[RMDB]
RNA sequence: GGGAACGACUCGAGUAGAGUCGAAAAGCUUUUGCGUACAGUCAGAUGAGGCCUCAUGUUCGUUACGACUUGUAUGAUGGUAACAUGUUUAUUAAAUUUCCUGAAGUAGUAUUUGAAAGUACACUUACUACAAGUUCUUGUUCGCAAGAACUUGUAGAAAAGAAACAACAACAACAAC
Reactivity to DMS in 0.01 (KOAc 150mM, MgCl2 10mM, bicine 150mM(pH8.5), 24C), signal-to-noise 2, nucleotides 027 to 126: g010c050u000u000u000u000g010c070g000u000a040c070a040g000u000c020a110g000a090u000g020a080g000g000c050c050u000c050a080u020g020u000u000c090g030u010u010a080c100g010a040c070u000u010g020u000a030u010g000a110u000g000g000u000a060a030c070a050u000g000u000u000u010a040u030u000a040a060a180u010u000u000c020c000u000g020a040a050g010u010a090g010u000a020u000u000u000g000a100a040a150g020u000a000c030a040c000u000u000a140
Reactivity to 2A3 in 0.01 (KOAc 150mM, MgCl2 10mM, bicine 150mM(pH8.5), 24C), signal-to-noise 2, nucleotides 027 to 126: g030c010u030u060u130u170g020c020g010u000a020c010a040g030u000c000a000g010a110u060g060a020g040g040c010c030u050c000a040u080g040u080u040c010g030u040u030a050c080g020a020c000u030u040g030u030a030u050g070a030u110g050g000u030a010a010c010a050u050g030u050u010u010a060u060u130a040a110a070u020u030u000c000c000u030g010a070a020g020u140a000g020u010a060u050u120u120g080a120a090a000g010u020a010c020a000c030u030u050a000